Chemical mapping of a 177-nucleotide RNA with 2A3 and DMS.
For 2A3 the reverse transcriptase was SuperScript II with manganese.
DMS adducts were read by reverse transcription with MarathonRT.
Values cover nucleotides 27 to 126.
It was measured as part of the RMDB library OK2TST.
RNA sequence: GGGAACGACUCGAGUAGAGUCGAAAAGGUGGGGAGGCUUCGAAUGGACAGGACGCGCAUAGUUCGGCGGUGGCGCCGCAACAUGGACGUGGCCGACGACGCCGAGUACGUGGAAAUGCUGGCCACACUGUUGUGGCCUGUUCGCAGGCCACAACAGAAAAGAAACAACAACAACAAC
Reactivity to 2A3 in 0.01 (KOAc 150mM, MgCl2 10mM, bicine 150mM(pH8.5), 24C), signal-to-noise 2, nucleotides 027 to 126: g060g010u040g000g030g000g010a030g010g000c000u030u030c060g100a130a040u100g020g020a010c030a050g050g010a020c030g020c010g000c050a040u050a080g080u080u060c000g000g010c020g010g060u020g080g040c040g030c000c000g030c020a040a070c030a100u160g000g040a030c050g010u000g020g000c010c020g010a030c020g010a020c000g000c000c020g010a020g020u050a030c030g030u050g000g040a070a110a040u140g070c060u010g010g050c030c010a010c010a000
Reactivity to DMS in 0.01 (KOAc 150mM, MgCl2 10mM, bicine 150mM(pH8.5), 24C), signal-to-noise 2, nucleotides 027 to 126: g000g040u010g010g020g000g010a070g000g020c020u000u010c050g010a090a120u000g010g020a080c080a090g010g010a040c080g020c060g000c040a050u000a120g010u000u000c050g020g010c040g000g010u000g000g010c030g010c010c000g000c080a060a070c100a090u000g000g010a060c090g020u010g010g020c020c000g000a080c050g020a080c080g010c000c020g000a080g010u010a060c130g020u000g000g000a060a080a100u010g000c030u010g010g010c000c050a040c070a180